[RMDB]
Structure probing data (2A3 and DMS) for a 177-nucleotide construct. The reactions ran in a buffer of 150 mM KOAc, 10 mM MgCl2 and 150 mM bicine (pH 8.5), at 24 C. For 2A3, 4,300 sequencing reads were counted.
RNA sequence: GGGAACGACUCGAGUAGAGUCGAAAAGAUAUGGAGCGUCCAUGGAGCCUUGCGGUCGGAAACGACCGGGAGGCUAUGAAGUGGCGCUCCUAAGUCAAACGUUUGAUUACUUCGGUAAUCAAACGAAUCUCCUAAAAGUGUUCGCACUUUUAGGAGAAAAAGAAACAACAACAACAAC
Reactivity to 2A3 in 0.01 (KOAc 150mM, MgCl2 10mM, bicine 150mM(pH8.5), 24C), signal-to-noise 1, nucleotides 027 to 126: g000a020u010a010u050g000g010a010g010c010g060u110c070c040a020u060g020g060a010g020c010c020u010u050g300c020g000g000u000c000g000g000a020a010a010c000g000a000c010c000g000g070g000a000g020g000c000u020a150u010g000a010a010g020u000g000g000c010g010c000u000c000c000u010a000a000g010u000c030a040a020a170c010g020u010u000u020g010a020u000u020a010c000u000u120c300g080g000u010a000a000u020c000a000a000a000c010g000a000a080
Reactivity to DMS in 0.01 (KOAc 150mM, MgCl2 10mM, bicine 150mM(pH8.5), 24C), signal-to-noise 2, nucleotides 027 to 126: g000a030u010a060u010g000g000a040g040c000g010u010c000c050a020u010g000g000a020g010c000c000u010u000g000c000g000g010u000c000g000g000a030a020a070c020g000a010c030c010g020g000g040a030g020g010c000u010a070u000g000a140a300g000u010g000g010c000g010c030u010c000c000u010a000a050g010u000c020a130a150a300c010g040u020u000u000g010a000u000u000a000c000u000u010c240g020g000u000a000a000u010c010a010a000a010c020g010a110a070